An RNA of 177 nucleotides, treated with 2A3 and DMS and read out base by base. The RNA was probed in 150 mM KOAc, 10 mM MgCl2 and 150 mM bicine (pH 8.5) at 24 C. Source: RMDB libraries RFM100 and RFMREP, as collected in RNAgym.
RNA sequence: GGGAACGACUCGAGUAGAGUCGAAAAAGCCGCCAUACGUACGCGUAUGGCGGCAACCAGCAGCACACUGUGGUUUGUACGGCACUGUGGCCACGUCCAAACCACACUGUGGUGUUAGAGCGAGGAAACCUUAUCUACCUUUCGAGGUAGAUAAGGUAAAAGAAACAACAACAACAAC
Reactivity to 2A3 in 0.01 (KOAc 150mM, MgCl2 10mM, bicine 150mM(pH8.5), 24C), signal-to-noise 6, nucleotides 027 to 126: a010g000c000c000g010c020c000a010u000a000c010g080u020a020c240g000c010g080u000a010u010g000g010c000g020g000c000a000a000c010c000a000g000c000a010g090c000a000c000a000c010u010g000u000g000g020u010u010u000g010u010a010c010g010g020c080a060c210u250g060u260g300g000c050c010a100c080g010u000c010c000a000a000a000c000c000a000c000a000c010u000g000u000g000g150u010g010u040u090a150g010a040g110c120g040a090g080g020a180a130
Reactivity to DMS in 0.01 (KOAc 150mM, MgCl2 10mM, bicine 150mM(pH8.5), 24C), signal-to-noise 5, nucleotides 027 to 126: a120g010c000c010g030c000c010a020u000a010c000g040u020a090c250g020c020g040u000a000u000g000g030c020g000g010c010a000a010c000c000a080g000c000a000g000c000a010c000a000c100u000g030u000g000g010u000u000u000g010u000a020c000g010g010c080a150c190u010g010u010g020g010c040c060a130c070g010u000c050c000a000a010a020c000c000a000c000a000c070u000g010u000g000g000u000g010u000u010a080g000a080g000c100g010a080g020g000a120a120